[RMDB]
Source information:
Chemical mapping of a 177-nucleotide RNA with 2A3 and DMS. In probing experiments dimethyl sulfate is read out at A N1 and C N3, which are open when not base-paired. For DMS, 20,133 sequencing reads were counted. The data come from the RNA Mapping Database (RMDB), library OK2TST.
RNA sequence: GGGAACGACUCGAGUAGAGUCGAAAAAGAUUCUCAUUCACUUUCUAGUGGCUGUGCUUACCAUGAAUUUUAUUCUCUGAUUCUUCAAGCCAGUAAGACUGUUUCUGAGUUCUAGCCAUUCCAUGCACUCAUGUAAGAAAUUCGUUUCUUACAUGAGAAAAGAAACAACAACAACAAC
Reactivity to 2A3 in 0.01 (KOAc 150mM, MgCl2 10mM, bicine 150mM(pH8.5), 24C), signal-to-noise 9, nucleotides 027 to 126: a000g050a060u120u020c010u010c020a030u140u080c020a020c040u080u140u070c070u090a040g080u030g090g000c020u030g060u120g060c010u040u060a080c030c040a090u070g020a040a050u130u090u120u160a130u240u030c070u000c020u060g060a110u100u010c010u040u050c050a020a020g000c010c000a010g010u020a050a010g050a030c020u020g020u060u080u010c020u010g030a020g010u010u010c010u030a030g020c030c010a040u050u020c020c000a040u090g030c030a030
Reactivity to DMS in 0.01 (KOAc 150mM, MgCl2 10mM, bicine 150mM(pH8.5), 24C), signal-to-noise 9, nucleotides 027 to 126: a080g000a200u000u000c020u000c020a110u010u000c060a050c040u000u000u000c080u010a080g020u000g000g010c050u000g010u010g010c100u000u000a100c110c080a060u000g020a050a040u000u010u010u010a090u010u010c070u000c110u000g000a070u000u000c040u000u000c070a040a050g010c020c010a030g010u010a080a080g010a060c050u000g010u000u000u000c030u000g010a050g010u000u000c020u000a100g020c060c060a100u000u000c020c020a080u010g010c150a250